[RMDB]
RNA sequence: GGGAACGACUCGAGUAGAGUCGAAAAAAGCCCUCGGCCUACGGGGUGCUCACUAAGUGCGUGGUACGCAAGUCCAACUCGCCCUCGGUCUUCAACAUCGAGCUCAUCGCCUUUGGCCCGGAGAACGAGACCGAGUACGAGAACCUCAUCAAGGAACUAGUAUGUACAUGUUCGCAUGUACAUACUAAAAAGAAACAACAACAACAAC
Reactivity to DMS in 0.01 (KOAc 150mM, MgCl2 10mM, bicine 150mM(pH8.5), 24C), signal-to-noise 2, nucleotides 027 to 156: a080a130g020c020c000c000u000c040g040g010c070c070u020a060c060g040g000g020g050u010g020c010u000c020a140c050u010a080a120g040u000g010c010g030u020g020g010u000a170c040g060c120a080a120g000u080c000c020a060a300c000u000c000g020c030c030c000u000c000g020g000u000c030u000u010c050a100a210c050a190u000c030g000a050g000c000u010c080a110u020c190g000c060c070u000u010u000g060g000c000c040c030g000g020a090g000a110a140c080g030a040g020a030c030c000g010a030g050u000a000c030g010a070g020a000a110c010c010u000c030a070u010c100a150a080g020g010a250a170c220
Reactivity to 2A3 in 0.01 (KOAc 150mM, MgCl2 10mM, bicine 150mM(pH8.5), 24C), signal-to-noise 4, nucleotides 027 to 156: a000a010g060c010c000c000u010c020g090g010c060c060u110a050c020g030g000g000g000u110g020c000u030c030a100c080u170a130a090g070u050g040c040g010u080g060g050u140a060c020g000c070a070a020g040u020c040c000a040a070c010u000c010g010c010c020c000u000c000g010g000u000c020u090u060c070a120a100c010a100u060c030g030a010g000c060u070c110a120u100c100g140c060c080u150u110u150g020g000c010c000c020g080g000a050g010a040a050c090g000a010g000a010c000c000g000a000g000u010a000c010g000a000g020a030a020c000c010u070c030a230u090c070a110a050g030g000a050a030c010